[RMDB]
Chemical mapping of a 177-nucleotide RNA with DMS and 2A3.
The RNA was probed in 150 mM KOAc, 10 mM MgCl2 and 150 mM bicine (pH 8.5) at 24 C.
The data come from the RNA Mapping Database (RMDB), library OK2TRN.
2A3 is a SHAPE reagent: it acylates the 2'-hydroxyl of flexible nucleotides of all four kinds.

RNA sequence: GGGAACGACUCGAGUAGAGUCGAAAACAAACUGCGCCGGGUGGACCUGCUGCACGACGUGGGCGAGAGCCUCAACCCGCUGCUCGACCUCGGGCAGAUCGAGGGCGGCUUCGUGCAGGGCGCGGGCGGUAUCGCAUAUCUUCGGAUAUGCGAUACCAAAAGAAACAACAACAACAAC
Reactivity to DMS in 0.01 (KOAc 150mM, MgCl2 10mM, bicine 150mM(pH8.5), 24C), signal-to-noise 2, nucleotides 027 to 126: c040a070a150a110c060u000g000c000g000c000c000g030g020g010u010g000g030a220c040c040u000g020c030u000g000c030a010c010g000a040c300g010u000g020g000g000c010g000a270g000a160g010c010c000u000c140a050a130c270c010c020g000c000u000g000c000u000c000g000a030c120c120u010c040g010g010g050c130a040g000a020u010c030g000a060g010g000g000c020g000g030c210u020u000c000g010u000g000c000a010g000g010g020c020g030c040g000g010g010c190
Reactivity to 2A3 in 0.01 (KOAc 150mM, MgCl2 10mM, bicine 150mM(pH8.5), 24C), signal-to-noise 2, nucleotides 027 to 126: c010a020a110a020c020u040g010c010g010c000c030g080g100g030u240g160g130a130c010c020u050g030c020u020g020c050a000c010g030a000c050g040u210g000g000g020c010g030a100g010a010g050c040c010u070c040a070a140c000c000c000g000c000u070g040c000u040c000g110a180c000c080u120c070g040g160g000c060a000g000a050u070c040g040a140g020g010g000c010g030g010c010u050u020c000g020u000g020c010a010g000g020g010c010g000c020g000g030g000c040